[RMDB]
The record gives the reactivity of an RNA of 177 nucleotides to DMS and 2A3.
It was measured as part of the RMDB library M2PK50.
2A3 adducts were read by reverse transcription with SuperScript II with manganese.
High DMS reactivity at an A or C suggests that its Watson-Crick edge is free.
The reactions ran in a buffer of 150 mM KOAc, 10 mM MgCl2 and 150 mM bicine (pH 8.5), at 24 C.
DMS adducts were read by reverse transcription with MarathonRT.
The DMS profile rests on 809 reads.
RNA sequence: GGGAACGACUCGAGUAGAGUCGAAAACCUGUAACGUUCGCGUUACAGGAAAAUAAAAAUCUCCAGCCAGGAGAAGGCGAAAAAUUGAUCGAAAACCAUCAAAAAGUCUACAGUUCGCUGUAGACAACUUCUAACGGUAGUUCGCUACCGUUAGAAGAAAAGAAACAACAACAACAAC
Reactivity to DMS in 0.01 (KOAc 150mM, MgCl2 10mM, bicine 150mM(pH8.5), 24C), signal-to-noise 1, nucleotides 027 to 126: c010c000u000g000u000a010a010c000g010u030u010c220g050c000g000u010u000a000c000a010g000g010a020a010a060a080u020a020a060a030a140a070u000c020u000c020c030a150g000c130c080a110g010g010a120g040a110a100g010g000c000g000a050a050a110a100a040u000u000g000a010u000c130g000a070a060a130a110c100c120a080u000c100a030a040a050a080a160g000u000c020u000a030c030a000g000u060u000c210g010c000u000g020u000a000g000a010c000a070a060
Reactivity to 2A3 in 0.01 (KOAc 150mM, MgCl2 10mM, bicine 150mM(pH8.5), 24C), signal-to-noise 2, nucleotides 027 to 126: c000c000u000g000u000a000a010c010g000u030u040c210g030c010g080u000u000a000c000a010g000g000a050a160a010a000u090a000a050a000a010a010u020c030u060c000c030a100g070c040c010a030g040g040a080g070a070a040g010g030c010g070a040a000a010a040a150u100u130g010a060u050c000g000a070a070a030a120c060c000a020u110c030a030a050a080a000a030g000u000c010u000a000c000a010g030u000u070c130g090c090u010g000u000a000g000a010c000a000a010